[RMDB]
RNA sequence: GGGAACGACUCGAGUAGAGUCGAAAAGCUGAAAGCUUCGGCUUUCAGCAAAGAAAAAGAUGUACAGCUUCUAAGGUACAUCUAGAAUAGAAGCGAAAAGAAAAAGCUUAACGUUCGCGUUAAGCAACGAAUUCUAGUAGUUCGCUACUAGAAUUCGAAAAGAAACAACAACAACAAC
Reactivity to DMS in 0.01 (KOAc 150mM, MgCl2 10mM, bicine 150mM(pH8.5), 24C), signal-to-noise 3, nucleotides 027 to 126: g010c000u000g000a000a010a010g020c000u000u020c230g040g000c000u000u000u000c000a000g020c010a010a030a090g010a080a120a090a090a040g000a020u010g000u010a010c000a210g010c060u000u010c080u010a070a070g020g000u000a000c010a010u000c000u000a040g000a070a100u000a090g000a020a030g010c010g010a070a060a080a090g000a070a080a080a120a120g000c000u000u000a000a010c010g010u000u010c270g030c020g010u000u010a000a010g020c000a040a040
Reactivity to 2A3 in 0.01 (KOAc 150mM, MgCl2 10mM, bicine 150mM(pH8.5), 24C), signal-to-noise 5, nucleotides 027 to 126: g010c000u010g020a000a000a000g000c010u060u100c180g110g000c000u010u010u000c000a000g010c010a000a030a010g040a000a100a010a000a010g000a000u010g000u000a010c030a090g040c050u100u040c070u250a100a060g050g000u000a000c000a010u000c000u000a010g070a050a060u100a040g040a060a020g040c070g060a060a060a040a050g180a030a100a040a020a000g000c000u000u000a010a000c000g020u030u060c240g010c000g060u000u000a000a000g000c000a000a010
This 177-nucleotide RNA was probed chemically with DMS and 2A3. Conditions: 150 mM KOAc, 10 mM MgCl2 and 150 mM bicine (pH 8.5), 24 C. For DMS the reverse transcriptase was MarathonRT.